[RMDB]
RNA sequence: GGGAACGACUCGAGUAGAGUCGAAAAGAUAUGGAAUUAGAAGCGAUAAGCUGCGGUCGGAAACGACCGGCAGCUUUUGACGCUUAUUCUUCCUAAGUCAAAACCCAAUUACUUCGGUAAUUGGGAAGUUACUAGUGUGGUUCGCCACACUAGUAACAAAAGAAACAACAACAACAAC
Reactivity to DMS in 0.01 (KOAc 150mM, MgCl2 10mM, bicine 150mM(pH8.5), 24C), signal-to-noise 2, nucleotides 027 to 126: g010a020u000a070u000g000g000a010a000u000u000a000g000a030a030g020c000g010a210u010a020a030g010c000u000g020c000g000g000u000c000g060g010a030a020a060c000g010a010c000c000g020g050c000a000g010c000u000u000u000u000g020a150c070g000c000u000u000a050u000u000c010u000u000c000c000u010a000a110g000u010c000a110a060a110a190c000c000c010a020a010u000u000a000c000u010u010c160g020g010u000a000a000u000u000g000g000g000a000a020

Record summary
The data come from the RNA Mapping Database (RMDB), library TTRDEL. The record gives the reactivity of an RNA of 177 nucleotides to DMS. The reactions ran in a buffer of 150 mM KOAc, 10 mM MgCl2 and 150 mM bicine (pH 8.5), at 24 C. Reactivities are given for positions 27 through 126. DMS (dimethyl sulfate) methylates the pairing face of unpaired adenines and cytosines.